[RMDB]
RNA sequence: GGGAACGACUCGAGUAGAGUCGAAAAAUAAACCGGAAGCGACGCAGGAAGCCCGACCGGAAGGGCAACCGGAAUGCGUAUCUCAACUCGCCCGAGACGCACCUGAGAGACGGGAAUGCGUAAAAAAUCAUAGCCUGUAGUUCGCUACAGGCUAUGAAAAAGAAACAACAACAACAAC
Reactivity to DMS in 0.01 (KOAc 150mM, MgCl2 10mM, bicine 150mM(pH8.5), 24C), signal-to-noise 1, nucleotides 027 to 126: a060u000a060a130a160c010c010g000g000a300a140g010c110g000a030c000g030c100a000g000g050a110a300g000c000c000c000g030a130c090c030g000g000a050a030g000g000g000c020a050a160c030c000g000g000a080a090u000g070c010g000u000a020u050c060u010c090a070a160c090u000c090g000c050c010c020g050a170g020a050c010g000c010a130c030c000u010g010a250g010a110g000a110c020g000g000g020a080a120u000g010c010g000u000a000a120a040a120a010a060
The record gives the reactivity of an RNA of 177 nucleotides to DMS. The reactions ran in a buffer of 150 mM KOAc, 10 mM MgCl2 and 150 mM bicine (pH 8.5), at 24 C. For DMS, 513 sequencing reads were counted. DMS adducts were read by reverse transcription with MarathonRT.